The data come from the RNA Mapping Database (RMDB), library TTRINS. This 177-nucleotide RNA was probed chemically with DMS. The reactions ran in a buffer of 150 mM KOAc, 10 mM MgCl2 and 150 mM bicine (pH 8.5), at 24 C.
RNA sequence: GGGAACGACUCGAGUAGAGUCGAAAAGAUAUGGAUAGAGGAACCGAGGCAACAGCGGGGGUAUACCGCUCCUCGGAAACGAGGAUGUAUACCCCCGACAUGCCUCUCAGUACUCUAUCCUAAGUCAUCAUUCAUGAGAGUUCGCUCUCAUGAAUGAAAAAGAAACAACAACAACAAC
Reactivity to DMS in 0.01 (KOAc 150mM, MgCl2 10mM, bicine 150mM(pH8.5), 24C), signal-to-noise 1, nucleotides 027 to 126: g010a010u000a300u020g000g000a020u020a000g000a000g000g000a140a180c300c300g000a030g000g000c140a040a040c210a150g000c030g020g000g000g010g010u000a010u000a010c020c040g000c100u010c000c010u000c000g000g000a080a040a090c000g000a000g000g000a010u000g000u000a020u000a010c010c000c010c010c000g020a000c030a250u000g000c000c000u000c000u000c020a020g010u000a080c000u000c000u000a000u010c000c000u000a040a120g000u000c020a200